[RMDB]
Source information:
This 207-nucleotide RNA was probed chemically with DMS and 2A3. The RNA was probed in 150 mM KOAc, 10 mM MgCl2 and 150 mM bicine (pH 8.5) at 24 C. For DMS the reverse transcriptase was MarathonRT.
RNA sequence: GGGAACGACUCGAGUAGAGUCGAAAAGAUUACCUUCGGGUAAUCAUCAAUGGGGUCACCUUGGACCGUUAGAAGGCAUCGAUCCUGAAGCCUCCACGGGGGAGCCUUCGACGCUAGGUGACGGAGGCACCCGCUCGCGCCCGGUUCGCCGGGCGAAUAGCUAUAUCCUUUUCGAAGGAUAUAGCUAAAAAGAAACAACAACAACAAC
Reactivity to DMS in 0.01 (KOAc 150mM, MgCl2 10mM, bicine 150mM(pH8.5), 24C), signal-to-noise 1, nucleotides 027 to 156: g000a010u000u000a010c040c000u010u000c230g060g030g000u000a000a000u010c010a060u000c070a090a140u000g000g000g010g000u000c000a020c020c000u000u000g110g040a080c150c000g020u010u000a070g010a130a040g030g010c050a100u010c150g040a140u000c000c000u000g020a110a180g020c110c010u010c020c030a300c010g000g020g060g000g020a150g000c010c010u000u000c000g010a040c050g010c050u000a010g040g000u000g010a040c000g020g010a020g020g000c000a100c010c020c020g020c060u000c030g000c020g020c000c000c000g020g000u020u000c170g000c020c000g020g020g060c020g010a010a040
Reactivity to 2A3 in 0.01 (KOAc 150mM, MgCl2 10mM, bicine 150mM(pH8.5), 24C), signal-to-noise 2, nucleotides 027 to 156: g000a000u000u000a000c000c000u020u060c240g150g000g000u020a000a000u010c010a040u120c020a020a250u190g070g000g100g000u000c010a010c020c040u080u070g100g090a110c130c030g030u080u080a150g030a050a010g030g000c020a230u110c040g200a300u170c020c000u030g030a020a020g060c010c020u030c030c010a030c010g050g000g000g000g000a020g000c000c000u020u010c110g050a010c000g010c020u030a010g000g000u000g020a000c010g000g000a000g010g000c020a060c000c020c010g060c050u110c040g040c010g020c000c000c010g000g010u050u030c190g020c090c000g000g000g010c000g000a010a040
Description: The DMS profile rests on 2,256 reads.